This 177-nucleotide RNA was probed chemically with 2A3 and DMS. DMS adducts were read by reverse transcription with MarathonRT. The 2A3 profile rests on 1,049 reads. For 2A3 the reverse transcriptase was SuperScript II with manganese. Source: RMDB library OK2TST, as collected in RNAgym.
RNA sequence: GGGAACGACUCGAGUAGAGUCGAAAAUCGUCGAGAGAUGUUUCGGGGAUUGUGACUUCCUCAGUUUUAAGAAUUCCCCGAUAUGUCUUUCUUCGGGCGCCCUUCUCAAGUGGUUGGCUAAGAGGGAAGAGGAAUGAUAGUUCGCUAUCAUUCCUCUAAAAGAAACAACAACAACAAC
Reactivity to 2A3 in 0.01 (KOAc 150mM, MgCl2 10mM, bicine 150mM(pH8.5), 24C), signal-to-noise 1, nucleotides 027 to 126: u040c010g020u020c020g020a000g000a010g000a030u000g020u040u030u010c000g030g040g000g000a020u060u190g070u140g140a060c020u190u130c070c070u120c070a030g020u000u010u030u190a110a030g060a100a080u060u150c000c000c000c000g000a000u000a000u010g010u000c010u000u000u000c000u040u000c000g050g060g000c060g010c000c000c020u110u040c010u030c040a080a060g040u010g110g110u100u120g090g000c040u010a040a100g050a060g060g030g030a050
Reactivity to DMS in 0.01 (KOAc 150mM, MgCl2 10mM, bicine 150mM(pH8.5), 24C), signal-to-noise 2, nucleotides 027 to 126: u000c000g010u000c070g010a050g010a050g020a020u000g010u000u000u000c010g010g010g000g000a020u000u000g000u000g010a060c050u000u010c180c180u020c120a110g010u010u010u010u020a100a130g010a090a060u010u000c000c000c000c020g010a010u000a000u000g010u010c000u000u000u000c010u000u000c030g010g000g000c210g000c030c000c010u010u000c030u000c020a110a090g010u000g010g010u010u010g020g000c020u010a140a080g000a030g010g010g010a110
Conditions: 150 mM KOAc, 10 mM MgCl2 and 150 mM bicine (pH 8.5), 24 C.